Chemical mapping of a 177-nucleotide RNA with 2A3 and DMS. Values are in units of 0.01, from 0 to 300, in steps of 10. Source: RMDB libraries RFM100 and RFMREP, as collected in RNAgym. 2A3 adducts were read by reverse transcription with SuperScript II with manganese. DMS (dimethyl sulfate) methylates the pairing face of unpaired adenines and cytosines. Conditions: 150 mM KOAc, 10 mM MgCl2 and 150 mM bicine (pH 8.5), 24 C.
RNA sequence: GGGAACGACUCGAGUAGAGUCGAAAACGACGCCUCGGAGCAGCUUGAGCCGGGCAUUCGCCCGGUCGAACCGUCGAAGUUCGUGGAAGCCGUAAUGGCAGGAAGCGAACGAACGUCGGAACAGGGAAUUAUAUUCGCAUUUCGAUGCGAAUAUAAUAAAAGAAACAACAACAACAAC
Reactivity to 2A3 in 0.01 (KOAc 150mM, MgCl2 10mM, bicine 150mM(pH8.5), 24C), signal-to-noise 9, nucleotides 027 to 126: c030g070a020c030g020c010c020u070c070g060g020a070g020c060a010g020c050u100u130g040a020g040c000c000g000g010g010c010a030u210u230c150g000c000c000c000g000g000u020c020g010a020a030c000c000g000u010c010g020a050a020g000u000u000c000g000u020g010g040a030a020g000c000c010g050u270a140a210u280g010g000c010a030g100g100a020a000g000c000g000a000a000c000g000a130a010c010g000u010c000g000g010a020a040c030a070g040g000g100a030
Reactivity to DMS in 0.01 (KOAc 150mM, MgCl2 10mM, bicine 150mM(pH8.5), 24C), signal-to-noise 9, nucleotides 027 to 126: c040g020a080c090g010c050c020u000c040g000g000a080g020c090a080g000c080u010u010g010a180g010c010c000g020g000g030c050a160u040u040c240g020c010c000c000g000g010u010c030g000a060a150c020c000g010u010c030g010a090a300g000u000u000c000g010u000g000g000a300a120g000c010c000g000u030a140a080u090g000g010c000a030g010g010a300a220g000c000g000a010a010c000g000a050a100c020g010u000c000g000g000a100a120c080a110g000g010g000a120